An RNA of 177 nucleotides, treated with 2A3 and DMS and read out base by base. High DMS reactivity at an A or C suggests that its Watson-Crick edge is free. Values are in units of 0.01, from 0 to 300, in steps of 10. The data come from the RNA Mapping Database (RMDB), libraries RFM100 and RFMREP. 2A3 adducts were read by reverse transcription with SuperScript II with manganese.
RNA sequence: GGGAACGACUCGAGUAGAGUCGAAAAUGCCUCCCCGAUCUGUUCCUUUCAGCAGAAACUAACGGCUUGUGGAUUUCUUUCUGACUAACAACAGGUCUAACACUCCUCGUCACUAUUACUAUUAACAUCUGUAUACUGUCUUCGGACAGUAUACAGAAAAAGAAACAACAACAACAAC
Reactivity to 2A3 in 0.01 (KOAc 150mM, MgCl2 10mM, bicine 150mM(pH8.5), 24C), signal-to-noise 7, nucleotides 027 to 126: u120g050c000c010u030c000c000c000c000g010a070u020c020u030g030u030u070c040c010u060u080u070c010a040g020c030a010g060a090a060a020c040u120a080a030c050g160g020c050u060u120g040u060g050g060a150u060u050u040c010u020u110u040c020u010g090a100c010u060a110a020c050a030a010c010a040g000g020u010c010u030a070a030c040a030c040u020c000c000u020c030g050u030c050a030c060u070a060u140u120a060c050u050a060u230u110a100a030c050a090
Reactivity to DMS in 0.01 (KOAc 150mM, MgCl2 10mM, bicine 150mM(pH8.5), 24C), signal-to-noise 4, nucleotides 027 to 126: u020g000c030c020u000c010c000c010c010g000a040u010c030u010g000u030u010c050c060u010u010u010c050a090g020c300a010g000a100a070a040c030u030a090a100c080g010g000c120u000u010g010u000g000g010a170u000u000u000c030u000u010u010c050u010g020a040c080u000a040a090c140a110a080c080a040g000g020u010c030u010a080a120c120a080c040u000c010c040u020c010g010u010c040a040c040u000a050u000u010a070c070u020a080u040u020a050a080c170a110